[RMDB]
RNA sequence: GGGAACGACUCGAGUAGAGUCGAAAACUUAUGUAGUUCUCACUGGCUUAGGUGAGUCCUUUAAGAAAGUUGCAACCAUACCGUAUAAGGUUUGCAACUCUGUUAAGGAUACUCUGGCUUAUUAUGCGCAUCCUCUUCUUCGGAAGAGGAAAAAGAAACAACAACAACAAC
Reactivity to 2A3 in 0.01 (KOAc 150mM, MgCl2 10mM, bicine 150mM(pH8.5), 24C), signal-to-noise 9, nucleotides 027 to 129: c020u080u060a070u200g150u120a050g000u040u000c030u000c000a090c050u080g030g000c020u080u250a020g030g020u060g030a050g030u010c000c000u010u020u030a040a040g030a040a140a010g010u020u000g010c000a000a000c010c020a030u110a140c030c060g130u160a110u080a250a110g020g000u070u040u120g000c000a000a010c000u000c000u010g120u080u060a000a000g000g010a020u040a080c020u010c020u040g000g000c010u050u020a060u080u040a070u160g110c140g010c030a040
Reactivity to DMS in 0.01 (KOAc 150mM, MgCl2 10mM, bicine 150mM(pH8.5), 24C), signal-to-noise 8, nucleotides 027 to 129: c060u020u080a080u080g000u050a050g040u020u020c030u010c030a070c140u020g000g000c050u000u000a060g020g030u030g020a150g000u000c020c000u000u020u070a070a030g040a050a080a030g000u000u000g040c040a030a000c080c020a110u040a110c180c180g060u020a220u000a100a060g020g020u020u010u010g000c020a050a000c020u000c040u000g000u030u030a000a010g040g000a040u030a060c040u040c020u000g010g060c020u000u000a060u030u030a040u060g050c140g000c180a100
Notes
Structure probing data (2A3 and DMS) for a 170-nucleotide construct. The DMS profile rests on 33,687 reads.